An RNA of 177 nucleotides, treated with 2A3 and DMS and read out base by base. High 2A3 reactivity points to a flexible backbone, as in loops and unpaired stretches. For DMS, 1,133 sequencing reads were counted. It was measured as part of the RMDB library OK2TST. DMS adducts were read by reverse transcription with MarathonRT.

RNA sequence: GGGAACGACUCGAGUAGAGUCGAAAAAAUUUAGGGGAAUUUGUCGGUACAGUUGAAGAAAGUAAUCAUGCUAAAGAACAAAUUUUAACAAUUAUGGACGCGCUUCAUCAACAUGGCGUAAAGGCACCGUUGCAAAUUUAUUCGUAAAUUUGCAACGAAAAGAAACAACAACAACAAC
Reactivity to 2A3 in 0.01 (KOAc 150mM, MgCl2 10mM, bicine 150mM(pH8.5), 24C), signal-to-noise 1, nucleotides 027 to 126: a000a060u200u230u200a080g040g000g000g000a000a020u130u000u000g000u030c040g010g000u080a030c060a010g030u040u010g090a030a010g000a040a130a000g020u010a070a090u030c040a050u100g010c010u080a140a050a050g080a060a000c010a040a100a100u040u100u120u070a080a050c040a030a050u110u000a070u160g020g020a010c010g000c000g000c000u110u030c050a090u130c000a010a030c010a050u070g030g000c040g000u000a000a000a200g040g000c030a010c030
Reactivity to DMS in 0.01 (KOAc 150mM, MgCl2 10mM, bicine 150mM(pH8.5), 24C), signal-to-noise 2, nucleotides 027 to 126: a090a060u030u010u000a090g000g000g000g000a090a110u000u010u040g000u000c000g000g010u010a070c030a060g060u000u010g000a080a070g000a000a010a110g010u000a040a040u020c090a070u000g020c080u000a040a080a020g010a050a120c080a070a070a080u010u000u000u000a040a060c050a060a050u000u000a050u000g000g010a080c110g020c100g010c040u000u000c030a070u000c100a010a050c080a100u000g010g010c010g070u010a040a050a110g010g000c040a020c300